Structure probing data (2A3 and DMS) for a 177-nucleotide construct. Reactivities are given for positions 27 through 126. The RNA was probed in 150 mM KOAc, 10 mM MgCl2 and 150 mM bicine (pH 8.5) at 24 C.

RNA sequence: GGGAACGACUCGAGUAGAGUCGAAAAUCGAGACUGCGUGUCCGAACGCCGCAUACGACCGAUAAACUGGCGAGUGGAUCGGGCCGAGCGCAGCUCUCGGCCCUUCCGCCAAUGAUCAGCCAGCAGCGACAUAUGUGUAGUUCGCUACACAUAUGUCAAAAGAAACAACAACAACAAC
Reactivity to 2A3 in 0.01 (KOAc 150mM, MgCl2 10mM, bicine 150mM(pH8.5), 24C), signal-to-noise 9, nucleotides 027 to 126: u070c010g010a010g040a050c030u040g020c050g050u140g030u060c040c020g020a030a030c040g030c030c010g010c020a020u050a140c060g070a080c040c020g030a060u110a090a140a040c010u010g000g000c010g020a040g010u030g010g010a030u040c110g000g000g000c010c000g000a000g000c080g010c090a040g020c040u020c000u000c000g000g000c000c000c000u000u000c010c000g000c010c010a100a110u190g050a090u100c040a010g010c000c000a010g030c040a030g090c040
Reactivity to DMS in 0.01 (KOAc 150mM, MgCl2 10mM, bicine 150mM(pH8.5), 24C), signal-to-noise 9, nucleotides 027 to 126: u010c030g020a100g000a110c080u000g010c050g020u020g000u020c050c050g010a080a090c110g010c030c030g000c060a060u010a090c080g000a130c050c020g000a080u010a060a100a170c010u010g000g010c010g010a110g030u000g000g000a010u000c290g010g000g020c000c060g000a020g000c060g020c140a100g010c130u020c000u000c010g000g010c010c000c000u000u000c000c010g000c010c120a090a100u030g000a070u020c130a130g010c010c010a020g020c150a110g010c160